Chemical mapping of a 177-nucleotide RNA with DMS. For DMS the reverse transcriptase was MarathonRT. The reactions ran in a buffer of 150 mM KOAc, 10 mM MgCl2 and 150 mM bicine (pH 8.5), at 24 C. Values are in units of 0.01, from 0 to 300, in steps of 10.
RNA sequence: GGGAACGACUCGAGUAGAGUCGAAAAAUGGGGUAAGGCUCCCAGUAGACGACUGGGUUGAUAGGCCGGAUCUGGAAGCCAGGUAACUGGUGGAGGUGACCGGUACUAAUAGGCCGAGGGCUUGUCCGGAUGAUAAGGUCUUCGGACCUUAUCAUCCAAAAGAAACAACAACAACAAC
Reactivity to DMS in 0.01 (KOAc 150mM, MgCl2 10mM, bicine 150mM(pH8.5), 24C), signal-to-noise 2, nucleotides 027 to 126: a090u000g050g010g000g000u000a190a180g000g030c080u020c000c000c010a020g000u000a110g040a140c270g010a260c010u000g020g000g020u000u000g040a070u000a020g020g000c010c000g000g020a300u000c000u000g000g050a300a240g010c000c010a020g000g010u010a080a110c000u000g010g020u000g000g000a300g010g010u010g000a030c170c010g020g010u000a100c020u000a030a160u010a150g000g000c000c000g000a230g000g000g000c110u000u000g010u000c110c120